[RMDB]
RNA sequence: GGGAACGACUCGAGUAGAGUCGAAAAGGGGGCGACAUGGCUUCGACGCCGGUGACAAUCCCUGAGGUGCAUGCCGAGAGCGUAACGUAUCUCGUAAAUCCAACGUUACGAUUAAAUAGUCGCAAACGACGACAACUACGCUCAGGGCGCGCUGGCACUUAGCUUCAAGGUUCGCCUUGAAGCUAAGAAAAGAAACAACAACAACAAC
Reactivity to 2A3 in 0.01 (KOAc 150mM, MgCl2 10mM, bicine 150mM(pH8.5), 24C), signal-to-noise 4, nucleotides 027 to 156: g000g010g000g000g000c030g010a040c060a060u100g000g040c010u100u110c110g040a050c130g010c000c010g000g020u030g010a030c040a050a050u050c020c000c000u010g000a020g000g030u040g010c050a070u180g050c040c030g030a050g000a010g060c010g010u000a050a010c040g030u040a110u070c070u020c030g040u020a000a080a070u130c160c060a070a020c060g010u000u020a000c000g010a010u050u150a070a050a100u120a040g020u010c010g000c070a110a190a130c130g120a030c000g010a000c010a050a030c030u040a010c020g000c010u000c010a000g010g010g010c000g000c000g000c000u010g030g000c000a000
Reactivity to DMS in 0.01 (KOAc 150mM, MgCl2 10mM, bicine 150mM(pH8.5), 24C), signal-to-noise 2, nucleotides 027 to 156: g020g010g030g040g040c070g000a120c010a140u020g020g000c010u000u000c110g020a170c110g030c010c000g010g020u000g010a170c080a100a170u000c010c020c010u000g000a100g030g000u000g030c010a060u020g030c010c000g010a300g000a050g000c020g010u010a030a110c050g000u000a060u010c090u010c070g000u000a040a060a110u000c110c090a080a100c040g000u010u000a020c000g000a060u010u020a080a120a170u000a090g010u000c020g010c020a050a110a100c050g000a080c030g020a010c030a080a150c010u000a000c010g000c020u000c020a220g000g020g020c070g010c030g040c020u000g000g020c040a190

Source: RMDB library RSTRND, as collected in RNAgym. Structure probing data (2A3 and DMS) for a 207-nucleotide construct. Reactivities are rounded to 0.1 and cut off at 0 and 3. For DMS the reverse transcriptase was MarathonRT. The DMS profile rests on 3,779 reads. The RNA was probed in 150 mM KOAc, 10 mM MgCl2 and 150 mM bicine (pH 8.5) at 24 C.